[RMDB]
RNA sequence: GGGAACGACUCGAGUAGAGUCGAAAAUGCAACGCUUAGAAUUGGCGGACGUGCGGUGGUCGUUGAUGGGAGGGGCGCGAGGCCACGGCUGCUGCACACCACGGCCACUCAUUGCUCACAGCGCCGAUAUGACUGCCUAGUUCGCUAGGCAGUCAUAAAAAGAAACAACAACAACAAC
Reactivity to 2A3 in 0.01 (KOAc 150mM, MgCl2 10mM, bicine 150mM(pH8.5), 24C), signal-to-noise 1, nucleotides 027 to 126: u110g020c000a090a000c030g040c070u120u230a080g050a240a130u170u050g040g050c030g000g000a100c060g000u060g030c030g060g000u000g020g000u030c000g020u030u110g110a140u180g020g060g040a110g060g030g030g000c020g030c080g060a070g060g130c030c010a000c000g010g000c000u070g030c000u020g000c030a010c040a000c030c010a000c020g050g020c010c020a020c020u050c010a080u000u230g010c000u030c000a040c020a090g030c010g000c000c000g030a050
Reactivity to DMS in 0.01 (KOAc 150mM, MgCl2 10mM, bicine 150mM(pH8.5), 24C), signal-to-noise 2, nucleotides 027 to 126: u000g030c080a080a030c080g010c080u000u000a090g000a150a110u000u020g000g000c010g000g000a050c150g040u000g020c110g000g050u000g000g030u000c000g000u010u010g040a130u000g000g000g000a140g030g000g030g020c050g020c070g000a180g040g000c050c040a130c050g020g010c020u010g000c030u010g010c010a070c000a050c060c030a060c040g050g000c000c010a050c040u010c030a110u000u020g000c050u010c070a100c130a090g010c050g020c040c010g000a160

The record gives the reactivity of an RNA of 177 nucleotides to 2A3 and DMS. DMS (dimethyl sulfate) methylates the pairing face of unpaired adenines and cytosines.